[RMDB]
RNA sequence: GGGAACGACUCGAGUAGAGUCGAAAAACGGCCGGCCCCUGCGCGGGUCGAAGAACGGCACGAACGGGGCGAAGAACGCCGGAUCGUCCAACAAUGCGUCCACCCGGGCCAGUUCCUCGGGCAGUCGGACCCGAAGGGUAUUCGUACCCUUCGGGUCAAAAGAAACAACAACAACAAC
Reactivity to DMS in 0.01 (KOAc 150mM, MgCl2 10mM, bicine 150mM(pH8.5), 24C), signal-to-noise 1, nucleotides 027 to 126: a090c060g020g000c020c010g070g000c010c000c020c010u000g050c300g010c110g010g030g000u020c010g000a110a140g030a110a110c050g010g000c050a030c070g000a030a050c050g000g000g000g020c090g000a180a080g000a140a110c140g000c020c000g030g000a100u010c030g010u000c040c040a180a070c120a070a050u000g000c000g020u020c000c040a150c050c010c020g000g010g000c080c040a130g020u000u020c200c000u020c000g000g000g030c030a080g020u000c080g000